Chemical mapping of a 177-nucleotide RNA with 2A3 and DMS. The RNA was probed in 150 mM KOAc, 10 mM MgCl2 and 150 mM bicine (pH 8.5) at 24 C. 2A3 adducts were read by reverse transcription with SuperScript II with manganese.
[RMDB]
RNA sequence: GGGAACGACUCGAGUAGAGUCGAAAAUGGAUUAUGAGGUGCGCCAUCAAAGCUUGGAUGAAAUCGCUGACACUCUGGAUGAUAAGAAGCUGACAAUUGACUUCGAGCUGUCUGAUGAUAUUUUGGAACCCUCUGAAUAGUUCGCUAUUCAGAGGGUAAAAGAAACAACAACAACAAC
Reactivity to 2A3 in 0.01 (KOAc 150mM, MgCl2 10mM, bicine 150mM(pH8.5), 24C), signal-to-noise 7, nucleotides 027 to 126: u090g050g060a050u120u060a090u300g050a030g020g010u030g040c020g020c020c010a030u030c030a070a030a000g020c030u040u050g050g030a030u050g080a050a060a040u080c040g010c060u040g020a030c000a030c080u000c020u030g100g040a050u100g020a020u130a170a050g080a060a020g040c070u060g050a050c060a080a100u090u040g060a080c030u020u000c020g020a000g010c030u020g040u130c040u020g030a050u030g030a020u050a130u150u070u060u020g030g020a030
Reactivity to DMS in 0.01 (KOAc 150mM, MgCl2 10mM, bicine 150mM(pH8.5), 24C), signal-to-noise 6, nucleotides 027 to 126: u020g010g000a100u020u030a060u000g010a060g000g010u010g010c050g000c080c020a050u010c040a040a090a060g010c060u000u010g010g000a100u010g010a070a070a070u010c060g010c030u000g000a110c110a050c080u010c030u010g000g000a120u010g010a090u010a080a090g000a050a060g000c020u000g010a100c120a050a090u000u010g000a230c100u000u000c040g000a060g000c080u000g000u020c050u010g010a050u010g010a060u020a070u000u000u000u000g010g020a210